[RMDB]
RNA sequence: GGGAACGACUCGAGUAGAGUCGAAAAGAGCCGAUACUCGUAAUUAUGAACUCGCGUGUACCCAGCAACCCGAGGUCGUGGAGGGUCUUGGCUAGCGCCCCUAGAAUUGUGGUUGGCGGGGGGAGUAACAUAUCUCGUCUUUCGAGACGAGAUAUGUAAAAGAAACAACAACAACAAC
Reactivity to 2A3 in 0.01 (KOAc 150mM, MgCl2 10mM, bicine 150mM(pH8.5), 24C), signal-to-noise 1, nucleotides 027 to 126: g070a010g010c020c020g010a020u030a010c010u030c030g070u100a060a160u240u120a060u180g040a050a030c010u060c050g060c010g000u090g040u120a090c000c050c010a020g000c040a060a030c030c000c000g010a010g010g040u020c010g000u060g030g060a080g030g000g030u000c010u020u010g000g000c000u020a020g040c000g040c070c000c000c060u000a070g070a300a190u130u130g060u120g060g000u160u070g060g000c000g000g000g000g030g000g010a030g060u020a040
Reactivity to DMS in 0.01 (KOAc 150mM, MgCl2 10mM, bicine 150mM(pH8.5), 24C), signal-to-noise 3, nucleotides 027 to 126: g000a070g020c010c020g010a040u000a040c030u000c010g000u000a140a140u000u010a050u010g010a060a040c020u010c010g030c270g010u000g020u000a080c030c010c040a170g020c020a140a050c040c030c010g010a030g000g000u000c020g010u010g010g010a300g000g020g000u000c060u000u000g000g010c030u000a090g020c140g000c020c020c020c050u010a110g010a060a160u000u000g010u010g010g020u000u000g010g010c100g000g020g010g000g000g000a120g020u000a070